This 177-nucleotide RNA was probed chemically with 2A3 and DMS.
[RMDB]
RNA sequence: GGGAACGACUCGAGUAGAGUCGAAAAAGUCGUAAUAAGCGGUUUUGAAUCGUUGAAUAUCCGCCGUAGUUUUCACGUCCAUGAUCCAGUGAAAUUCAGGGAUAAUUUUGUCCGGACGGCACCGACACCACGGAGUAGUAUUCGUACUACUCCGUGGAAAAGAAACAACAACAACAAC
Reactivity to 2A3 in 0.01 (KOAc 150mM, MgCl2 10mM, bicine 150mM(pH8.5), 24C), signal-to-noise 2, nucleotides 027 to 126: a010g020u040c020g000u080a000a100u070a210a000g020c040g010g060u010u040u210u210g150a040a020u060c030g030u000u100g060a120a020u070a050u070c090c120g000c000c050g030u030a090g000u000u000u020u120c020a010c010g080u000c020c040a080u230g040a120u050c070c040a000g010u030g060a000a020a020u170u140c050a090g120g030g060a030u090a070a270u200u300u140u140g050u010c020c000g000g040a030c000g000g000c020a020c000c020g010a000c010a020
Reactivity to DMS in 0.01 (KOAc 150mM, MgCl2 10mM, bicine 150mM(pH8.5), 24C), signal-to-noise 3, nucleotides 027 to 126: a130g010u000c010g010u000a120a080u010a180a090g010c000g000g010u000u020u010u000g000a070a030u010c020g020u010u000g010a110a130u000a080u010c110c080g010c020c020g010u010a100g010u000u010u000u020c020a020c010g020u010c060c090a120u010g010a090u000c080c090a110g010u000g000a010a030a040u000u000c090a090g020g010g010a030u010a030a160u000u000u000u010g010u000c010c010g000g000a020c050g010g000c050a080c140c010g000a020c060a220
2A3 adducts were read by reverse transcription with SuperScript II with manganese. The 2A3 profile rests on 1,287 reads. DMS (dimethyl sulfate) methylates the pairing face of unpaired adenines and cytosines. The reactions ran in a buffer of 150 mM KOAc, 10 mM MgCl2 and 150 mM bicine (pH 8.5), at 24 C.